[RMDB]
RNA sequence: GGGAACGACUCGAGUAGAGUCGAAAAGCUGAACACAUAUUUAAAAGCUACAAUAGCUCUGCUCACUGCCAUUGCAGAGUCUGGAGGAAAGAGUAGCAGGCUUGAUAGGAGCAAUUGGCUGAAUAAUCUUUUGCAAUGCCAAUAAAUAAUGAAAAAACUCAUUAUCGUGAUUCGUCACGAUAAUGAGAAAAGAAACAACAACAACAAC
Reactivity to 2A3 in 0.01 (KOAc 150mM, MgCl2 10mM, bicine 150mM(pH8.5), 24C), signal-to-noise 3, nucleotides 027 to 156: g000c030u070g090a140a010c040a010c020a090u180a180u130u170u180a070a160a020a010g030c020u020a010c060a050a120u020a090g020c000u010c000u020g030c020u040c060a060c080u070g050c030c020a080u060u160g000c010a010g000a060g070u030c050u030g070g020a030g010g020a050a070a010g050a020g010u040a000g000c030a020g060g000c010u060u050g040a050u080a110g070g040a030g010c050a090a030u030u030g000g000c010u020g030a010a050u150a080a030u140c040u040u180u080u050g020c030a030a060u110g000c020c030a010a020u100a040a050a040u120a020a060u120g050a040a040a060a060a010a010
Reactivity to DMS in 0.01 (KOAc 150mM, MgCl2 10mM, bicine 150mM(pH8.5), 24C), signal-to-noise 2, nucleotides 027 to 156: g040c020u020g000a110a140c070a160c090a130u000a140u000u000u000a080a050a140a210g010c000u000a050c010a040a180u000a090g010c020u000c010u000g000c040u000c070a160c030u000g010c030c050a070u000u000g000c070a040g030a060g000u000c080u000g040g010a230g030g010a160a030a120g010a140g070u000a040g000c050a100g000g020c040u010u000g010a110u010a160g070g010a100g020c010a130a090u000u000g010g010c000u000g000a070a140u010a130a100u020c090u000u020u020u000g030c130a010a140u000g060c020c020a020a050u010a050a040a120u010a130a060u030g010a000a060a060a090a050a160
Structure probing data (2A3 and DMS) for a 207-nucleotide construct. The data come from the RNA Mapping Database (RMDB), library OK3TST. The 2A3 profile rests on 2,087 reads. For DMS, 2,212 sequencing reads were counted. 2A3 adducts were read by reverse transcription with SuperScript II with manganese.